[RMDB]
RNA sequence: GGGAACGACUCGAGUAGAGUCGAAAAGAGGCCACCCCCCUUCCUCCCAUGGAAAAGUUACCAUGGGAUCUUUGGAUUCCCCUACUGGAACAACAUGGGUUUAAAGGAAAGAGUAAGCUGUACAAGCCAGGACGGAGAUAUUCGUAUCUCCGUCCUGAAAAGAAACAACAACAACAAC
Reactivity to DMS in 0.01 (KOAc 150mM, MgCl2 10mM, bicine 150mM(pH8.5), 24C), signal-to-noise 2, nucleotides 027 to 126: g000a130g000g010c050c060a140c000c000c010c070c030c010u010u020c000c010u000c000c000c000a020u000g020g000a090a070a060a060g020u000u000a130c000c000a050u030g030g000g010a000u010c010u000u020u030g030g020a060u000u010c040c000c090c190u020a160c190u010g020g020a040a010c030a040a120c030a000u000g000g000g000u080u000u050a080a070a030g000g030a000a010a050g010a080g000u010a080a120g000c020u000g010u010a050c120a130a090g010c040
Reactivity to 2A3 in 0.01 (KOAc 150mM, MgCl2 10mM, bicine 150mM(pH8.5), 24C), signal-to-noise 3, nucleotides 027 to 126: g100a000g030g010c020c010a040c010c000c000c000c000c000u000u000c000c010u030c000c000c000a010u000g020g040a050a030a160a160g070u050u020a160c010c000a030u090g030g000g000a010u010c010u070u100u090g210g010a040u150u190c020c000c000c000u080a120c000u060g030g010a050a020c020a010a010c020a110u020g000g020g120u040u090u200a070a100a050g080g060a040a020a020g130a030g020u120a090a000g010c000u000g010u140a060c080a270a000g010c000